[RMDB]
RNA sequence: GGGAACGACUCGAGUAGAGUCGAAAAGAUAUGGAGCCACAAGGUUCGAAGAACUCUCUUCGGAAACGAAGAGAGGGGAGAACUGAUGUGGCUCCUAAGUCAAAAGUGACAUGUUCGCAUGUCACAAGACAUCUAACUGGUUCGCCAGUUAGAUGUCAAAAGAAACAACAACAACAAC
Reactivity to 2A3 in 0.01 (KOAc 150mM, MgCl2 10mM, bicine 150mM(pH8.5), 24C), signal-to-noise 2, nucleotides 027 to 126: g040a000u060a020u170g000g010a000g010c010c000a000c010a070a020g030g010u040u030c030g080a140a070g040a190a110c000u020c000u000c000u000u000c000g010g010a070a100a060c010g000a000a000g000a010g010a000g000g000g000g020a140g010a010a030c020u040g020a060u300g000u000g000g000c010u000c010c000u000a000a000g000u000c000a050a010a040a120g020u010g000a000c000a020u010g060u080u110c300g000c120a000u020g000u020c000a000c000a000a020
Reactivity to DMS in 0.01 (KOAc 150mM, MgCl2 10mM, bicine 150mM(pH8.5), 24C), signal-to-noise 4, nucleotides 027 to 126: g010a010u010a300u020g010g010a010g020c000c000a020c000a090a300g000g010u000u000c000g030a200a090g020a150a190c000u000c000u000c000u000u010c000g010g000a150a050a180c000g000a000a000g030a010g000a000g010g000g010g020a300g000a010a000c000u010g010a260u010g010u000g000g010c000u000c000c000u000a010a090g000u010c020a070a050a100a110g020u000g000a000c000a010u000g020u010u020c240g020c010a000u000g000u000c010a000c000a090a060
Record summary: The record gives the reactivity of an RNA of 177 nucleotides to 2A3 and DMS. For DMS the reverse transcriptase was MarathonRT. Source: RMDB library TTRDEL, as collected in RNAgym. Conditions: 150 mM KOAc, 10 mM MgCl2 and 150 mM bicine (pH 8.5), 24 C.